The record gives the reactivity of an RNA of 207 nucleotides to 2A3 and DMS. The reactions ran in a buffer of 150 mM KOAc, 10 mM MgCl2 and 150 mM bicine (pH 8.5), at 24 C. Source: RMDB library ARCHII, as collected in RNAgym. 2A3 adducts were read by reverse transcription with SuperScript II with manganese. High DMS reactivity at an A or C suggests that its Watson-Crick edge is free.
[RMDB]
RNA sequence: GGGAACGACUCGAGUAGAGUCGAAAAAUGGAUUAUGGGAGUGUGUGACUUGAACUAUUGAUUGGUCUGUGUAGAUAUAUGCCUGCCACAUGGGAAUUCACAACCAAAUGUGUCUUUGUUCCAAUCGCCGUGUAAGCCCUAUACAGAGGAUAGGCUGCAGGAGUAAGUGGUUCGCCACUUACUCCUGAAAAGAAACAACAACAACAAC
Reactivity to 2A3 in 0.01 (KOAc 150mM, MgCl2 10mM, bicine 150mM(pH8.5), 24C), signal-to-noise 3, nucleotides 027 to 156: a010u040g010g030a020u070u110a040u130g030g010g010a080g010u030g010u000g000u070g070a040c030u040u080g040a090a010c020u010a070u160u160g050a070u010u010g030g010u050c050u040g040u010g030u100a010g080a110u040a010u020a020u260g030c010c010u000g000c000c020a060c010a090u070g010g000g000a050a030u150u120c040a030c020a160a060c010c060a010a020a130u070g010u010g000u050c040u060u140u080g050u050u020c020c000a040a070u030c050g020c090c010g010u050g010u080a080a060g000c000c000c000u010a020u020a030c030a050g080a030g040g030a020u020a070g020g000c050u030g010
Reactivity to DMS in 0.01 (KOAc 150mM, MgCl2 10mM, bicine 150mM(pH8.5), 24C), signal-to-noise 1, nucleotides 027 to 156: a040u020g000g020a160u000u010a100u000g020g010g010a060g020u000g000u010g030u010g030a100c050u000u010g030a080a100c100u010a080u000u010g010a170u040u010g020g020u000c020u000g030u000g020u010a090g000a100u010a080u010a060u020g020c010c010u010g010c100c060a090c030a050u020g000g020g000a110a100u000u000c030a050c010a050a230c050c070a040a060a150u010g020u010g010u010c020u000u010u020g010u000u010c010c010a040a080u010c090g010c060c060g030u020g030u000a020a090g000c010c000c000u000a080u010a160c070a150g000a110g020g000a110u000a050g000g030c010u000g020